[RMDB]
RNA sequence: GGGAACGACUCGAGUAGAGUCGAAAAUCCUUCCUUUUCGAAGGAAGGACAGUGCAGAGUCUUCGCAUCUGUGAAUCACACAACAGCCGUGUCUAUGCGAGGUUUUAAUCAAGUUCGCUUGAUUAAACCCUACCAAAGGGUUCGCCCUUUGGUAGGGAAAAGAAACAACAACAACAAC
Reactivity to DMS in 0.01 (KOAc 150mM, MgCl2 10mM, bicine 150mM(pH8.5), 24C), signal-to-noise 3, nucleotides 027 to 126: u000c000c000u000u000c000c000u000u000u000u010c150g020a030a010g010g000a010a000g000g000a020c090a050g040u010g010c030a050g000a070g010u010c030u000u000c040g010c020a080u000c030u000g000u000g000a090a080u010c100a100c060a060c090a090a060c160a090g010c090c080g010u000g010u010c100u000a060u010g010c030g000a050g010g000u010u000u000u010a000a000u000c000a010a010g010u010u010c220g020c000u000u000g000a020u000u000a000a020a070
Reactivity to 2A3 in 0.01 (KOAc 150mM, MgCl2 10mM, bicine 150mM(pH8.5), 24C), signal-to-noise 3, nucleotides 027 to 126: u010c000c000u000u020c000c000u020u060u030u090c240g140a000a020g000g000a000a010g010g000a010c040a040g170u130g050c030a010g010a020g100u050c010u040u030c060g010c020a020u010c020u030g030u040g130a080a100u140c040a020c010a010c020a120a150c040a120g120c060c090g090u060g020u040c040u100a060u050g000c010g010a020g010g020u000u050u030u040a000a000u010c000a010a000g010u030u050c160g060c090u000u000g000a010u000u000a010a010a010

About this RNA
Structure probing data (DMS and 2A3) for a 177-nucleotide construct. For DMS, 4,087 sequencing reads were counted. The data come from the RNA Mapping Database (RMDB), library M2PK50. Reactivities are given for positions 27 through 126.